[RMDB]
RNA sequence: GGGAACGACUCGAGUAGAGUCGAAAAUCCUCAGGGUUCGCCCUGAGGAAAACGCUCAACUCAUGGAGCGCACGACGGAUCAGCAUCGAUUCGACAUGAGAAAAAGAACUUGCUUCGGCAAGUUCAACAACGACUAACCGUUCGCGGUUAGUCGUUGAAAAGAAACAACAACAACAAC
Reactivity to 2A3 in 0.01 (KOAc 150mM, MgCl2 10mM, bicine 150mM(pH8.5), 24C), signal-to-noise 1, nucleotides 027 to 126: u020c000c000u010c000a000g010g020g000u030u050c180g050c040c000c000u040g000a000g000g000a020a000a000a030c000g010c000u000c000a030a080c010u000c010a000u000g000g000a000g000c000g050c080a030c150g180a000c020g000g000a010u010c010a020g170c080a170u150c140g010a020u000u000c000g010a000c000a000u020g020a020g000a040a060a030a030a040g000a000a000c000u000u000g020c020u030u100c150g060g000c000a000a000g010u000u000c000a010a000
Reactivity to DMS in 0.01 (KOAc 150mM, MgCl2 10mM, bicine 150mM(pH8.5), 24C), signal-to-noise 1, nucleotides 027 to 126: u000c000c000u000c000a020g000g020g030u010u000c200g000c000c000c040u000g000a000g010g000a010a010a040a150c030g010c020u000c020a080a120c020u010c020a010u010g010g050a020g020c020g020c170a100c230g040a070c050g000g010a010u000c000a090g020c200a080u000c110g010a030u000u000c000g010a160c000a000u000g000a000g000a120a050a060a200a050g000a000a000c000u000u020g010c000u010u000c280g010g000c010a000a000g000u000u000c000a040a180